[RMDB]
RNA sequence: GGGAACGACUCGAGUAGAGUCGAAAAGAACCGCGAUUCGUCGCGGUUCGAGCGCCGUAGCGCGGAACGGCGUAACGGCAGCAUUAGCGCGCAGCUGCCGACGAUCGGGUGGUUUCGACCACCCGAAUCUACUGAAACUUUUCGAAGUUUCAGUAGAAAAAGAAACAACAACAACAAC
Reactivity to DMS in 0.01 (KOAc 150mM, MgCl2 10mM, bicine 150mM(pH8.5), 24C), signal-to-noise 6, nucleotides 027 to 126: g000a000a000c000c000g030c000g010a030u000u010c170g020u000c000g020c000g010g010u000u000c000g000a110g010c010g010c000c000g010u000a100g010c030g010c030g000g010a100a020c010g000g000c000g010u000a060a160c030g010g000c000a010g000c000a070u010u010a090g010c030g020c040g020c070a180g000c000u000g010c000c000g010a090c200g010a110u000c000g000g000g020u000g010g010u000u000u010c190g010a030c010c000a010c000c000c000g000a000a020
Reactivity to 2A3 in 0.01 (KOAc 150mM, MgCl2 10mM, bicine 150mM(pH8.5), 24C), signal-to-noise 5, nucleotides 027 to 126: g010a000a000c000c000g010c010g010a010u030u070c170g020u010c000g100c000g000g010u000u000c000g000a000g000c010g000c000c000g010u030a040g090c040g000c060g070g050a040a010c010g010g000c010g000u020a150a040c020g020g000c010a000g010c020a050u040u140a060g050c040g000c010g000c050a020g010c000u000g010c020c010g020a090c050g050a060u060c010g000g000g000u000g010g030u030u070u100c190g050a020c010c000a000c000c000c000g000a000a000

Chemical mapping of a 177-nucleotide RNA with DMS and 2A3. It was measured as part of the RMDB library M2PK50. Conditions: 150 mM KOAc, 10 mM MgCl2 and 150 mM bicine (pH 8.5), 24 C. DMS adducts were read by reverse transcription with MarathonRT. For 2A3, 16,209 sequencing reads were counted. 2A3 adducts were read by reverse transcription with SuperScript II with manganese. Reactivities are given for positions 27 through 126.